[RMDB]
RNA sequence: GGGAACGACUCGAGUAGAGUCGAAAAGCACUCCUUUUCGAAGGAGUGCCCAGGCGCGCGGCCUAUGUCCUGUCGCGUGUGCGCCGCGCGCGAUAUACGCGCAUCUGUGCAUAUUCGUAUGCACAAAGAAUAGAGGAUAGUUCGCUAUCCUCUAUUCAAAAGAAACAACAACAACAAC
Reactivity to DMS in 0.01 (KOAc 150mM, MgCl2 10mM, bicine 150mM(pH8.5), 24C), signal-to-noise 7, nucleotides 027 to 126: g010c000a010c000u000c000c000u000u000u000u020c170g010a020a020g000g000a020g020u000g010c010c050c100a090g010g010c000g010c000g020c000g010g010c000c060u010a070u010g010u010c020c020u000g000u000c100g010c010g010u000g010u000g000c080g020c000c000g000c020g010c000g010c000g010a030u010a070u010a040c010g010c010g020c110a160u010c160u000g010u000g000c000a000u000a020u000u010c170g010u000a010u000g000c000a000c000a020a060a090
Reactivity to 2A3 in 0.01 (KOAc 150mM, MgCl2 10mM, bicine 150mM(pH8.5), 24C), signal-to-noise 9, nucleotides 027 to 126: g020c000a000c000u000c000c000u020u030u040u100c220g110a020a010g000g000a000g000u000g000c000c000c010a080g080g000c000g000c000g000c000g010g020c010c030u160a220u230g060u030c010c020u070g060u130c070g000c000g010u020g020u020g020c040g000c000c000g000c000g000c000g000c000g000a000u030a010u010a050c000g020c000g000c030a060u030c090u100g010u010g000c010a000u020a030u050u090c200g080u040a000u010g000c000a000c000a000a040a000